RNA sequence: GGGAACGACUCGAGUAGAGUCGAAAACCCUUCGGGGACGCUCCCUUACGGGAGCGGGAACGCGGGGAAAGGAAACAUCUGUGUACCCGCAGGAAAAGAAAGCAAACGCGAUGCCGUGAGUAGGGGCCGUUACUCCACAUUUCGAUGUGGAGUAACGAAAAGAAACAACAACAACAAC
Reactivity to DMS in 0.01 (KOAc 150mM, MgCl2 10mM, bicine 150mM(pH8.5), 24C), signal-to-noise 2, nucleotides 027 to 126: c000c000c000u020u010c040g000g000g040g020a150c020g040c000u000c010c010c000u030u070a120c240g030g040g020a020g020c010g000g000g020a180a070c090g020c020g000g070g000g000a160a170a220g020g010a080a130a060c110a070u000c000u000g000u000g000u010a190c000c000c000g040c000a030g000g000a050a060a090a060g030a130a070a100g000c080a030a050a130c120g000c020g000a080u040g000c000c030g000u000g000a120g010u020a030g000g000g020g060c100
Reactivity to 2A3 in 0.01 (KOAc 150mM, MgCl2 10mM, bicine 150mM(pH8.5), 24C), signal-to-noise 2, nucleotides 027 to 126: c000c000c000u030u060c040g050g000g000g010a020c000g020c000u000c000c000c000u010u150a100c120g000g000g000a000g000c000g000g000g000a010a000c090g000c000g010g040g000g120a050a000a000g060g050a070a190a080c060a260u000c010u060g010u010g000u050a030c000c000c010g000c040a030g110g000a010a050a000a010g150a040a080a000g040c030a080a070a000c060g000c040g060a020u160g030c030c000g050u030g020a030g000u070a030g110g000g000g000c030
Structure probing data (DMS and 2A3) for a 177-nucleotide construct. 2A3 adducts were read by reverse transcription with SuperScript II with manganese. The reactions ran in a buffer of 150 mM KOAc, 10 mM MgCl2 and 150 mM bicine (pH 8.5), at 24 C. As a SHAPE reagent, 2A3 marks flexible, mostly unpaired nucleotides at the ribose 2'-OH. DMS adducts were read by reverse transcription with MarathonRT.